[RMDB]
RNA sequence: GGGAACGACUCGAGUAGAGUCGAAAAUCGCAAAACCGCGGCAAGUGGAGUUUGCGAGAGGAGGCUGGGUUUUGGCUUCCUUAAGCAAUCGGUCACCGAGAAGGUGUGGUCGUUACCGUGAAAUUCCGUGACAAAAUAACGUUCGCGUUAUUUUGAAACGAGUUUGUAGAUUCGUCUACAAACUCGUAAAAGAAACAACAACAACAAC
Reactivity to 2A3 in 0.01 (KOAc 150mM, MgCl2 10mM, bicine 150mM(pH8.5), 24C), signal-to-noise 3, nucleotides 027 to 156: u040c000g000c000a010a000a010a070c030c020g010c030g140g040c160a160a070g020u060g020g050a160g030u020u020u020g000c010g000a000g000a010g010g000a000g010g000c030u090g170g110g000u090u110u150u300g040g000c000u010u000c000c000u010u010a050a010g020c000a020a070u050c000g040g000u000c010a010c020c040g050a070g080a220a070g120g040u130g010u030g060g000u010c030g040u030u040a080c020c020g020u010g050a090a070a040u110u030c030c040g050u070g040a020c000a000a000a000a000u000a010a010c010g020u040u050c210g000c000g090u010u010a010u010u010u000u010g010a030a020
Reactivity to DMS in 0.01 (KOAc 150mM, MgCl2 10mM, bicine 150mM(pH8.5), 24C), signal-to-noise 2, nucleotides 027 to 156: u000c020g030c020a040a050a050a140c040c030g000c020g070g040c120a090a160g010u020g010g000a060g020u000u000u000g030c000g000a300g000a030g000g030a030g010g020c010u000g030g000g010u000u000u000u000g040g010c000u000u000c000c000u000u020a010a300g030c020a030a010u000c000g000g020u000c010a070c000c010g010a160g000a140a130g000g030u000g030u000g030g040u000c050g000u000u000a020c030c030g000u010g000a090a120a170u000u010c010c010g030u000g030a300c040a010a000a030a020u000a010a010c030g020u000u010c290g000c020g030u000u000a000u000u000u000u000g000a040a090